[RMDB]
RNA sequence: GGGAACGACUCGAGUAGAGUCGAAAAGAAAGAAAGAAAGAAAUACAUACAUGUACACACACAUGUCAUCCACACACAUACAUAUAUAUAUGUUUGUAUGGAUAUGUGUGUGUAUGUGUGUGUAUAACAUUGGAUGAAGCUUCGGCUUCAUCCAAUGAAAAGAAACAACAACAACAAC
Reactivity to DMS in 0.01 (KOAc 150mM, MgCl2 10mM, bicine 150mM(pH8.5), 24C), signal-to-noise 3, nucleotides 027 to 126: g010a110a060a080g030a080a060a080g000a070a090a130g010a060a100a060u000a010c010a010u010a000c000a010u000g000u000a000c010a000c010a000c000a000c030a000u000g020u010c200a120u020c130c070a160c060a030c080a080c120a020u000a020c030a030u000a060u000a160u030a140u000a000u020g000u000u000u010g030u000a050u000g020g000a010u010a000u000g020u000g000u000g020u000g000u000a000u000g020u020g000u000g040u000g000u010a000u000a070a130
Reactivity to 2A3 in 0.01 (KOAc 150mM, MgCl2 10mM, bicine 150mM(pH8.5), 24C), signal-to-noise 8, nucleotides 027 to 126: g100a010a050a000g120a050a050a000g140a030a120a010g100a030a150a000u010a010c000a000u020a010c000a010u010g000u010a000c000a000c000a000c000a000c000a000u020g040u090c030a030u050c050c010a030c000a000c000a000c010a040u040a020c020a020u070a020u030a020u040a010u000a010u270g030u030u050u020g050u030a080u090g030g010a010u010a000u020g010u000g000u000g000u010g000u010a000u000g000u000g000u000g000u000g000u000a000u000a010a010